[RMDB]
RNA sequence: GGGAACGACUCGAGUAGAGUCGAAAACCCCUCCCGUAGUACAUGGUGUGGCCUGUCGCAUGGCCGUAGACGCUCACGGCGUUGAACGAGCCGGAGACCCACGCGAGGGGGUGUUCGGUGGAGAUGACUGCUAACUUGGGUUCGCCCAAGUUAGCAGAAAAGAAACAACAACAACAAC
Reactivity to DMS in 0.01 (KOAc 150mM, MgCl2 10mM, bicine 150mM(pH8.5), 24C), signal-to-noise 2, nucleotides 027 to 126: c050c010c000c020u000c010c000c000g020u000a070g030u000a090c130a110u020g000g000u010g010u010g000g020c120c060u010g050u000c080g040c110a200u000g000g010c010c030g040u010a090g000a040c040g020c000u000c180a100c230g000g010c010g040u000u010g000a080a170c070g000a180g000c000c020g010g010a100g010a050c010c020c000a040c050g000c170g000a160g030g010g000g020g000u000g000u010u000c030g020g020u000g030g000a120g020a140u000g000a170
Reactivity to 2A3 in 0.01 (KOAc 150mM, MgCl2 10mM, bicine 150mM(pH8.5), 24C), signal-to-noise 1, nucleotides 027 to 126: c010c030c000c020u000c000c010c030g060u080a080g070u090a060c120a180u170g160g000u130g030u030g110g010c000c040u140g020u110c070g030c090a040u040g030g000c000c000g010u000a000g000a030c030g000c020u070c040a120c220g040g060c000g000u010u050g040a180a060c030g020a010g000c000c000g000g000a020g030a000c010c000c000a010c000g060c070g060a110g080g030g020g020g010u010g090u040u040c050g000g040u000g020g040a120g000a040u130g050a040
Chemical mapping of a 177-nucleotide RNA with DMS and 2A3. Values cover nucleotides 27 to 126. High DMS reactivity at an A or C suggests that its Watson-Crick edge is free. The RNA was probed in 150 mM KOAc, 10 mM MgCl2 and 150 mM bicine (pH 8.5) at 24 C.